Background
An RNA of 177 nucleotides, treated with DMS and 2A3 and read out base by base. It was measured as part of the RMDB library M2PK50. As a SHAPE reagent, 2A3 marks flexible, mostly unpaired nucleotides at the ribose 2'-OH. DMS adducts were read by reverse transcription with MarathonRT.

RNA sequence: GGGAACGACUCGAGUAGAGUCGAAAACCAAGGUAGUUCGCUACCUUGGAAAGAAAGCUCGAGGGAAGGGAAGGGAAAGGACGCUCGAGCAACCCACCCAAAAAAGAGCAUGCUUCGGCAUGCUCAAGAUUGAAAGAUCGUUCGCGAUCUUUCAAUCAAAAGAAACAACAACAACAAC
Reactivity to DMS in 0.01 (KOAc 150mM, MgCl2 10mM, bicine 150mM(pH8.5), 24C), signal-to-noise 2, nucleotides 027 to 126: c010c000a000a040g000g010u000a000g010u000u000c210g010c010u000a000c000c000u000u000g030g000a000a020a080g000a130a110a100g020c000u000c000g000a060g000g000g000a150a130g020g010g010a150a120g000g000g020a100a110a120g020g030a120c100g000c010u000c000g010a000g010c020a050a070c020c020c040a180c090c050c060a010a060a080a090a070a130g000a000g020c000a000u000g000c000u000u000c200g050g010c010a010u000g000c010u000c000a010a010
Reactivity to 2A3 in 0.01 (KOAc 150mM, MgCl2 10mM, bicine 150mM(pH8.5), 24C), signal-to-noise 1, nucleotides 027 to 126: c000c000a000a000g000g000u010a000g010u040u080c180g020c090u000a010c010c000u000u010g000g010a000a020a010g060a040a070a010g010c010u010c000g020a020g030g030g110a140a090g060g000g060a100a030g080g000g010a080a080a040g070g020a030c040g020c060u010c000g000a000g000c000a000a000c000c000c000a050c000c020c040a060a130a000a010a020a020g010a000g010c010a010u000g000c000u030u050c150g060g000c000a000u000g010c010u030c000a010a000
The 2A3 profile rests on 2,200 reads.